[RMDB]
RNA sequence: GGGAACGACUCGAGUAGAGUCGAAAAUAGAAACGGGCAAUUAGGAUCUAGGACCAGUAACACUUGCCCCGCAAAUAUUAUAACAUGGGCCUUAUGAUUGCUCGGUUUGUUACAUCUAACAUCCUAACCUAUAGCUGGGAUUCGUCCCAGCUAUAGGAAAAGAAACAACAACAACAAC
Reactivity to 2A3 in 0.01 (KOAc 150mM, MgCl2 10mM, bicine 150mM(pH8.5), 24C), signal-to-noise 5, nucleotides 027 to 126: u230a030g120a020a070a010c000g000g010g000c000a010a030u020u010a040g090g040a080u070c040u050a010g010g000a000c000c000a020g030u090a100a010c030a030c090u050u060g050c060c100c000c020g010c010a050a050a020u170a050u180u130a090u060a130a070c160a180u030g030g010g010c000c000u060u030a050u020g010a020u010u020g000c010u000c050g030g020u080u030u120g050u010u070a060c060a060u060c040u060a080a020c020a070u020c010c000u010a060a120
Reactivity to DMS in 0.01 (KOAc 150mM, MgCl2 10mM, bicine 150mM(pH8.5), 24C), signal-to-noise 5, nucleotides 027 to 126: u030a090g000a040a090a100c030g000g000g010c000a010a020u010u000a050g000g020a080u030c120u020a040g000g010a010c020c010a080g000u020a070a110c200a070c180u020u000g000c010c070c040c080g010c080a030a050a090u020a050u050u030a050u030a080a060c170a090u020g020g010g010c000c020u000u000a030u020g000a010u000u000g000c000u010c040g010g010u010u000u010g000u000u020a060c250a140u010c080u010a050a070c140a060u010c000c000u020a050a230
The record gives the reactivity of an RNA of 177 nucleotides to 2A3 and DMS. The DMS profile rests on 8,532 reads. For 2A3 the reverse transcriptase was SuperScript II with manganese. Reactivities are given for positions 27 through 126. DMS adducts were read by reverse transcription with MarathonRT. The data come from the RNA Mapping Database (RMDB), library OK1LIB. The reactions ran in a buffer of 150 mM KOAc, 10 mM MgCl2 and 150 mM bicine (pH 8.5), at 24 C.